This 177-nucleotide RNA was probed chemically with DMS.
The data come from the RNA Mapping Database (RMDB), library TTRDES.
For DMS the reverse transcriptase was MarathonRT.
The reactions ran in a buffer of 150 mM KOAc, 10 mM MgCl2 and 150 mM bicine (pH 8.5), at 24 C.

RNA sequence: GGGAACGACUCGAGUAGAGUCGAAAAGAUAUGGACGAGCGCACAGCAACAGCUUGUGGCUCGGAAACGAGCCCAAGACAUGCUGGAUCUCGUCCUAAGUCAAAAGGGCUUGGUUCGCCAAGCCCAAUCGAUUGGGACUGUUCGCAGUCCCAAUCGAAAAAGAAACAACAACAACAAC
Reactivity to DMS in 0.01 (KOAc 150mM, MgCl2 10mM, bicine 150mM(pH8.5), 24C), signal-to-noise 1, nucleotides 027 to 126: g000a050u000a300u000g010g010a040c000g010a000g000c300g060c300a300c040a000g000c020a050a160c220a170g000c000u020u000g000u060g050g010c000u000c040g000g000a010a060a140c000g000a000g000c000c010c000a000a010g020a050c070a260u010g020c010u010g000g000a110u000c000u000c000g000u000c000c000u000a040a140g010u010c000a120a070a100a170g000g020g010c000u000u000g000g020u000u020c300g000c000c000a030a030g080c000c000c000a000a010